Structure probing data (2A3 and DMS) for a 177-nucleotide construct. The data come from the RNA Mapping Database (RMDB), library OK2TRN.
RNA sequence: GGGAACGACUCGAGUAGAGUCGAAAAUGGGGGGCUCAUGCGCACAGCAACCUCAGGGCCAGCACCCCCGACAUGGCAGCUUUUCUUUCUUGGCUCACAGACAGCACCGGGAGGCAAGGUCAGGGGGCUAAUUCAAUACCUUCGGGUAUUGAAUUAGAAAAGAAACAACAACAACAAC
Reactivity to 2A3 in 0.01 (KOAc 150mM, MgCl2 10mM, bicine 150mM(pH8.5), 24C), signal-to-noise 2, nucleotides 027 to 126: u090g000g000g000g000g000g000c020u010c020a080u110g040c030g010c030a050c020a100g020c020a020a060c020c020u030c050a000g010g050g000c030c000a010g020c020a200c000c010c020c010c010g000a030c020a090u070g070g000c030a030g060c100u180u150u150u050c020u070u170u020c010u120u160g040g000c020u020c020a090c010a040g180a060c030a040g000c030a060c050c060g000g000g000a030g000g040c050a040a030g000g010u010c030a020g040g000g000g010g020
Reactivity to DMS in 0.01 (KOAc 150mM, MgCl2 10mM, bicine 150mM(pH8.5), 24C), signal-to-noise 4, nucleotides 027 to 126: u010g020g010g000g000g010g020c050u010c120a070u010g010c100g000c070a080c150a100g020c060a080a110c050c030u000c070a070g020g020g000c020c050a070g030c100a180c020c010c010c010c010g030a070c080a060u010g010g000c080a080g000c080u000u000u000u000c050u010u010u010c040u020u000g010g000c010u000c020a090c090a110g010a090c100a060g010c080a070c040c050g010g010g010a070g010g010c060a030a050g010g010u010c050a080g010g000g000g010g020
Source information: The 2A3 profile rests on 2,121 reads.